[RMDB]
RNA sequence: GGGAACGACUCGAGUAGAGUCGAAAAUGCAUUACAUAGAUUUAGAUGUGCUAGAGUAAGUAAUGGAGGGUUUUCAGCUUGUAGUCCUACCAAGUCAUCCUGGAUGAUCGUGACGACUGACACCAUGACGUUGAUUCAACUUCGGUUGAAUCAACGUAAAAGAAACAACAACAACAAC
Reactivity to 2A3 in 0.01 (KOAc 150mM, MgCl2 10mM, bicine 150mM(pH8.5), 24C), signal-to-noise 3, nucleotides 027 to 126: u120g030c000a000u070u080a080c030a050u110a060g140a270u070u090u000a120g020a220u220g130u040g170c020u080a030g040a020g110u090a200a000g020u020a040a030u020g040g030a030g040g040g010u070u040u000u090c040a000g020c010u040u020g050u000a030g000u000c000c000u010a050c040c030a090a000g060u060c000a030u040c000c050u060g010g020a090u040g100a080u060c070g020u020g040a060c070g000a010c080u100g010a020c000a020c020c010a030u140g020
Reactivity to DMS in 0.01 (KOAc 150mM, MgCl2 10mM, bicine 150mM(pH8.5), 24C), signal-to-noise 2, nucleotides 027 to 126: u020g000c000a080u010u010a040c100a020u040a080g000a060u020u000u000a070g000a160u050g020u010g020c000u000a040g010a080g000u000a070a050g000u010a020a060u000g010g000a080g020g010g000u000u000u000u030c040a080g000c050u000u030g010u000a120g000u000c020c020u030a060c080c040a050a100g000u020c020a080u000c020c110u010g020g040a100u000g000a000u000c080g060u010g000a030c100g000a020c040u000g000a100c050a090c000c030a060u030g000
The record gives the reactivity of an RNA of 177 nucleotides to 2A3 and DMS. Source: RMDB library OK1LIB, as collected in RNAgym. For DMS, 2,553 sequencing reads were counted. The RNA was probed in 150 mM KOAc, 10 mM MgCl2 and 150 mM bicine (pH 8.5) at 24 C. The 2A3 profile rests on 1,405 reads. For DMS the reverse transcriptase was MarathonRT.